RNA sequence: GGGAACGACUCGAGUAGAGUCGAAAAGUAACGCUCGGUAAGGUAGCCAAAAGGCUGAAACUCCGUGCACAAAGACCGCACGGACGCUUCACAUAUAGCUCAUAAACAAGGGUUUGCGAGCUAGCUUGUGGAGUGUGAACCUCUCAAGACCCACAAUCAAUUUAGGAAAGUUCGCUUUCCUAAAUUGAAAAGAAACAACAACAACAAC
Reactivity to 2A3 in 0.01 (KOAc 150mM, MgCl2 10mM, bicine 150mM(pH8.5), 24C), signal-to-noise 6, nucleotides 027 to 156: g040u040a110a070c080g030c100u060c060g080g030u070a100a050g040g020u020a010g010c020c020a090a210a120a110g030g000c020u040g010a040a030a030c030u000c000c000g000u010g010c010a010c020a040a220a010g090a060c040c040g010c000a000c000g000g000a000c010g000c000u010u010c010a000c010a000u060a000u010a020g020c000u000c010a020u050a060a040a010c060a150a250g300g100g000u020u020u030g020c020g000a000g000c000u000a050g090c040u010u020g000u000g000g010a000g000u010g000u000g000a010a020c000c000u050c010u010c040a040a070g030a120c010c010c000a030c050a040a030u040
Reactivity to DMS in 0.01 (KOAc 150mM, MgCl2 10mM, bicine 150mM(pH8.5), 24C), signal-to-noise 2, nucleotides 027 to 156: g020u000a080a110c120g020c040u000c060g000g000u010a090a110g020g000u000a060g030c010c020a060a120a100a230g000g030c000u000g030a060a080a130c040u000c000c000g090u000g010c010a300c040a080a090a100g000a160c040c040g040c020a020c000g010g010a030c040g020c000u000u000c020a000c020a040u010a110u000a020g000c010u000c000a020u010a010a020a030c030a220a210g030g050g010u000u000u010g020c040g000a050g020c000u010a020g000c120u000u000g030u030g000g000a030g010u000g020u000g000a050a080c020c000u010c040u000c030a020a110g010a130c000c010c010a080c040a070a300u000
The record gives the reactivity of an RNA of 207 nucleotides to 2A3 and DMS. DMS adducts were read by reverse transcription with MarathonRT. The DMS profile rests on 3,959 reads. It was measured as part of the RMDB library PDB130. For 2A3, 6,517 sequencing reads were counted.